Structure probing data (2A3 and DMS) for a 177-nucleotide construct.
High 2A3 reactivity points to a flexible backbone, as in loops and unpaired stretches.
The reactions ran in a buffer of 150 mM KOAc, 10 mM MgCl2 and 150 mM bicine (pH 8.5), at 24 C.
For 2A3 the reverse transcriptase was SuperScript II with manganese.
RNA sequence: GGGAACGACUCGAGUAGAGUCGAAAACAUCAGGUUAAUAAUCCUGAGCUCGCAACCCUUAAACUGGGGGGACGCAUGAGAAAAGAUGACUAGGUUAUUGAAUUCCGAGUUGAGUCCACGGACUCAGGGUACUAUGAAACUUCGGUUUCAUAGUACCAAAAGAAACAACAACAACAAC
Reactivity to 2A3 in 0.01 (KOAc 150mM, MgCl2 10mM, bicine 150mM(pH8.5), 24C), signal-to-noise 3, nucleotides 027 to 126: c010a110u030c010a000g010g020u060u110a130a040u020a070a030u210c000c000u000g010a010g020c010u030c020g010c000a010a050c020c000c000u050u110a270a300a160c240u220g030g000g030g000g010g040a050c080g000c040a040u240g000a000g060a050a110a010a020g040a060u090g020a020c080u080a060g030g110u090u080a100u070u140g080a130a100u180u000c020c040g020a050g090u090u080g010a000g000u000c020c010a030c130g080g000a010c010u000c000a010g020
Reactivity to DMS in 0.01 (KOAc 150mM, MgCl2 10mM, bicine 150mM(pH8.5), 24C), signal-to-noise 2, nucleotides 027 to 126: c160a130u010c050a030g020g040u000u000a070a110u010a150a160u010c000c000u000g010a010g000c020u000c050g010c090a100a300c010c010c000u000u000a070a060a130c240u000g020g000g000g010g000g000a070c180g010c030a030u020g010a100g000a080a080a100a190g000a070u020g010a050c060u010a070g030g030u000u000a110u010u000g010a090a170u000u000c010c000g010a080g000u020u000g010a040g000u020c000c030a150c300g030g010a020c010u000c000a050g010